[RMDB]
RNA sequence: GGGAACGACUCGAGUAGAGUCGAAAACAUAGCGUUUCUCAAUGUGCGCCAUUAACAUUGUUUAUGCAAGCACGUUUCGCAAUGUACGGCGCAGAAACAUUGCCAACACAAAUACGCUUCACGAUGUAAAACAUCGGUGCGUUCGCGCACCGAUGAAGUAUUAAAAUUACUUCGGUAAUUUUAAUACAAAAGAAACAACAACAACAAC
Reactivity to DMS in 0.01 (KOAc 150mM, MgCl2 10mM, bicine 150mM(pH8.5), 24C), signal-to-noise 3, nucleotides 027 to 156: c040a100u000a050g020c040g010u010u000u000c010u020c040a080a040u000g010u010g040c000g020c040c010a130u000u000a110a070c030a060u000u010g030u000u000u000a070u010g040c060a090a110g040c080a110c080g030u000u000u000c120g010c050a010a010u000g020u000a050c090g020g000c000g010c000a160g000a070a090a060c000a050u000u010g020c010c010a050a070c080a150c090a080a060a120u000a070c060g020c010u000u000c050a060c040g020a090u000g010u000a060a090a110a270c010a020u000c020g020g000u000g010c000g020u000u000c200g010c020g010c010a040c010c020g010a010u000g000a000a100
Reactivity to 2A3 in 0.01 (KOAc 150mM, MgCl2 10mM, bicine 150mM(pH8.5), 24C), signal-to-noise 7, nucleotides 027 to 156: c050a060u150a010g010c010g000u010u070u050c070u020c000a010a030u050g010u020g020c000g020c030c010a060u140u190a070a010c020a010u030u040g070u060u130u100a120u180g060c080a080a080g090c050a050c170g030u040u100u110c060g020c000a000a000u010g000u020a030c050g000g000c000g010c020a000g030a010a070a000c010a010u010u030g050c040c040a130a020c050a060c010a100a170a020u100a040c010g010c000u080u130c110a070c130g090a070u110g050u250a030a070a050a050c000a000u000c000g010g000u000g010c010g010u040u040c140g020c000g000c030a000c000c030g000a000u000g000a010a000